Description
An RNA of 177 nucleotides, treated with 2A3 and DMS and read out base by base. For 2A3, 2,410 sequencing reads were counted. The RNA was probed in 150 mM KOAc, 10 mM MgCl2 and 150 mM bicine (pH 8.5) at 24 C. Reactivities are given for positions 27 through 126. DMS adducts were read by reverse transcription with MarathonRT.

RNA sequence: GGGAACGACUCGAGUAGAGUCGAAAAUGGCCUCCGCAGGCGCUUCGGGCGGUGCCGCAACCUCGCUCGGUGCCGGUGCUUACCUGACUGCAGGGAUGGGUGGCCCCACUUAUUUCGGCGGCACGGCAUACCCAAGCAUUUUCGAAUGCUUGGGUAUAAAAGAAACAACAACAACAAC
Reactivity to 2A3 in 0.01 (KOAc 150mM, MgCl2 10mM, bicine 150mM(pH8.5), 24C), signal-to-noise 2, nucleotides 027 to 126: u100g070g020c000c020u020c050c050g060c110a060g070g000c050g010c040u080u200c060g050g030g000c040g030g000u050g000c030c000g060c030a060a130c030c020u040c030g020c030u020c030g030g000u000g030c020c020g040g030u040g000c000u030u140a080c000c010u060g150a230c090u110g110c120a060g000g020g060a090u110g070g000g040u020g010g020c010c000c030c020a060c050u190u190a170u090u160u120c060g050g000c000g020g000c000a020c000g020g000c020
Reactivity to DMS in 0.01 (KOAc 150mM, MgCl2 10mM, bicine 150mM(pH8.5), 24C), signal-to-noise 5, nucleotides 027 to 126: u010g020g000c020c020u000c060c060g020c080a150g010g010c060g010c060u010u000c050g010g000g030c060g010g010u000g030c020c050g030c110a100a120c110c070u010c060g000c050u000c030g010g020u010g010c060c040g000g010u010g020c030u000u010a110c030c010u000g010a170c110u000g010c050a060g010g010g000a080u010g020g010g010u010g010g000c060c040c040c020a090c100u000u010a080u000u000u010c070g010g010c020g000g020c040a050c060g010g010c100